[RMDB]
The record gives the reactivity of an RNA of 177 nucleotides to DMS and 2A3. Reactivities are rounded to 0.1 and cut off at 0 and 3. The reactions ran in a buffer of 150 mM KOAc, 10 mM MgCl2 and 150 mM bicine (pH 8.5), at 24 C. It was measured as part of the RMDB library TTRDEL. For DMS, 2,492 sequencing reads were counted.
RNA sequence: GGGAACGACUCGAGUAGAGUCGAAAAGAUAUGGAUCGUUGUGGAGAUCCUAGGUCGGAAACGACCUAUGAUCGAUGAAACACCGAUCCUAAGUCAAAAGAUAGGCCCCGUUCGCGGGGCCUAUCAAGAUAGGUUUAUGGUUCGCCAUAAACCUAUCAAAAGAAACAACAACAACAAC
Reactivity to DMS in 0.01 (KOAc 150mM, MgCl2 10mM, bicine 150mM(pH8.5), 24C), signal-to-noise 2, nucleotides 027 to 126: g000a020u000a010u020g000g000a000u000c000g010u000u000g010u000g000g010a040g000a000u000c000c120u000a000g000g020u000c010g020g010a010a000a030c010g000a010c000c010u000a010u000g000a000u010c000g000a160u000g000a210a200a010c000a000c080c000g030a020u000c000c010u000a000a060g000u000c000a140a090a160a140g010a020u000a000g000g020c000c010c010c000g060u000u000c210g040c030g000g020g000g030c000c000u000a000u000c000a060a080
Reactivity to 2A3 in 0.01 (KOAc 150mM, MgCl2 10mM, bicine 150mM(pH8.5), 24C), signal-to-noise 1, nucleotides 027 to 126: g000a010u030a000u020g000g000a000u010c030g010u010u020g020u020g020g040a020g000a020u000c000c000u010a000g030g000u010c010g000g000a000a000a000c000g000a000c000c010u010a020u020g000a000u010c010g150a300u000g000a000a000a000c000a000c050c000g020a000u000c000c000u000a010a010g000u000c000a060a000a080a180g000a000u000a000g020g040c000c050c020c000g040u040u070c270g010c060g140g000g140g050c000c000u000a000u000c000a000a000